[RMDB]
RNA sequence: GGGAACGACUCGAGUAGAGUCGAAAACCAGAUGACGGUCCUGCCAUGAGACCGCAACGAGAGCAUGUCGCAUCGAAUGGACUCGGGGAGUCGGCAGCUUGCCCCACGGAUGAGCGCCUAAUGACGGAAGAGACGUGCAACUUCGGUUGCACGUCAACAUAUGCUCUAACUUCGGUUAGAGCAUAUGAAAAGAAACAACAACAACAAC
Reactivity to 2A3 in 0.01 (KOAc 150mM, MgCl2 10mM, bicine 150mM(pH8.5), 24C), signal-to-noise 6, nucleotides 027 to 156: c010c000a030g080a150u140g050a040c030g000g010u020c010c010u070g130c070c030a150u160g030a050g010a080c020c040g040c040a030a040c040g060a000g010a010g070c050a060u090g040u170c040g000c050a050u050c070g060a050a060u070g020g030a030c030u010c070g020g000g010g010a030g040u070c020g040g000c010a030g020c040u070u100g020c000c010c010c030a060c060g020g000a070u090g040a030g030c040g040c010c010u080a120a070u130g060a040c070g060g030a040a030g070a030g000a070c000g000u000g000c000a010a000c010u000u060c160g130g000u000u000g000c000a000c000g000u000c000a000a000
Reactivity to DMS in 0.01 (KOAc 150mM, MgCl2 10mM, bicine 150mM(pH8.5), 24C), signal-to-noise 3, nucleotides 027 to 156: c000c020a130g010a090u020g000a080c010g000g010u000c010c020u000g000c050c210a130u000g020a140g000a030c010c040g000c050a080a110c070g000a130g010a140g030c030a090u000g030u000c010g020c020a080u010c000g030a080a300u010g020g000a100c020u000c060g030g030g020g010a160g010u000c030g010g010c020a070g040c040u010u010g010c020c020c020c040a160c040g020g010a100u000g010a120g020c040g010c020c030u020a070a080u010g010a110c040g010g010a110a100g020a170g010a020c000g050u000g000c000a020a000c010u000u010c300g040g000u000u000g000c000a010c010g000u000c000a060a060
The record gives the reactivity of an RNA of 207 nucleotides to 2A3 and DMS. For DMS, 7,127 sequencing reads were counted. The 2A3 profile rests on 5,120 reads. 2A3 adducts were read by reverse transcription with SuperScript II with manganese. The reactions ran in a buffer of 150 mM KOAc, 10 mM MgCl2 and 150 mM bicine (pH 8.5), at 24 C. High 2A3 reactivity points to a flexible backbone, as in loops and unpaired stretches.